[RMDB]
RNA sequence: GGGAACGACUCGAGUAGAGUCGAAAAGGAGACAGUUCGGAACUAUAAGGACAACGAACAGAUCCCAAGUUGUCCUUAUAACUGGACUGAGUACAGUUAGUUGUAUAGCAUACUCUUGGGAUCUGUUGUAUGCUAUAUAGUUCUAACUGUACGAGCACACUACCUACAUCUUCGGAUGUAGGUAGUGAAAAGAAACAACAACAACAAC
Reactivity to 2A3 in 0.01 (KOAc 150mM, MgCl2 10mM, bicine 150mM(pH8.5), 24C), signal-to-noise 4, nucleotides 027 to 156: g140g040a070g020a010c000a000g000u010u020c020g030g020a110a080c050u010a010u010a010a020g020g000a010c010a020a000c030g140a090a010c040a090g000a010u020c020c000c000a040a100g000u010u010g000u000c000c000u000u010a000u000a030a020c010u020g000g020a000c020u010g020a010g040u020a010c000a000g000u000u010a020g000u040u230g010u010a010u000a020g010c000a000u020a040c000u020c020u130u100g000g000g000a010u010c020u000g010u040u090g010u010a010u000g000c000u000a000u000a010u010a030g050u090u000c000u010a000a000c000u000g000u000a000c010g000a010g020c070a010
Reactivity to DMS in 0.01 (KOAc 150mM, MgCl2 10mM, bicine 150mM(pH8.5), 24C), signal-to-noise 2, nucleotides 027 to 156: g030g020a180g030a160c020a050g010u000u010c050g030g000a100a170c120u000a040u000a020a070g020g000a040c000a020a030c050g010a060a110c080a050g010a050u000c020c000c010a090a270g010u000u010g010u000c010c010u020u000a030u000a020a190c050u000g000g020a010c020u000g000a120g040u000a030c010a020g020u000u000a020g030u000u000g040u000a030u000a040g000c030a050u000a030c040u000c100u000u010g020g010g010a030u010c030u000g010u010u000g020u000a010u000g000c000u000a040u000a000u010a080g010u000u000c020u000a030a010c000u000g030u000a010c030g020a160g000c080a250